This 207-nucleotide RNA was probed chemically with DMS and 2A3. The reactions ran in a buffer of 150 mM KOAc, 10 mM MgCl2 and 150 mM bicine (pH 8.5), at 24 C. For 2A3 the reverse transcriptase was SuperScript II with manganese.
RNA sequence: GGGAACGACUCGAGUAGAGUCGAAAAGGUGUCAGUAUAGAGUUCAAGGAAUCCAGGAGGAACAGGUCUAAGGGAAGACAGUGACGUUGCUUUUGAACAUAAUUUGAUUUAUGGUAGGUGUCUUGAGGAAACAGAAAUGUUCAGUGGACAGCUGGAAGUAUAACGACCUGUUCGCAGGUCGUUAUACAAAAGAAACAACAACAACAAC
Reactivity to DMS in 0.01 (KOAc 150mM, MgCl2 10mM, bicine 150mM(pH8.5), 24C), signal-to-noise 2, nucleotides 027 to 156: g070g060u020g030u000c020a070g040u000a120u000a140g020a080g010u000u000c020a110a070g020g020a080a050u000c060c120a120g000g010a090g020g000a090a080c090a090g010g000u000c040u000a070a190g010g010g020a030a100g020a050c040a120g030u010g010a090c090g000u010u020g040c020u000u000u000u000g010a080a070c040a050u000a010a020u000u000u000g000a140u010u020u000a020u000g000g000u000a090g030g030u000g010u010c030u010u000g020a110g020g000a100a030a060c040a080g010a040a100a130u000g040u010u000c030a080g040u000g010g030a100c020a130g000c030u010g000g000a080a110
Reactivity to 2A3 in 0.01 (KOAc 150mM, MgCl2 10mM, bicine 150mM(pH8.5), 24C), signal-to-noise 4, nucleotides 027 to 156: g030g010u020g010u040c020a010g010u030a100u080a090g060a020g020u040u070c070a050a040g040g010a110a030u030c060c050a040g010g030a030g030g020a050a030c030a040g070g000u010c040u120a030a060g040g000g000a040a000g020a030c040a030g010u020g060a030c050g030u050u030g040c030u080u060u090u180g040a070a000c010a020u090a100a080u130u100u120g120a130u020u050u050a070u060g030g020u050a040g000g030u030g020u030c030u040u050g040a060g010g060a010a050a000c040a020g090a030a090a030u100g000u070u040c000a020g010u050g040g040a010c010a020g020c020u030g000g010a090a070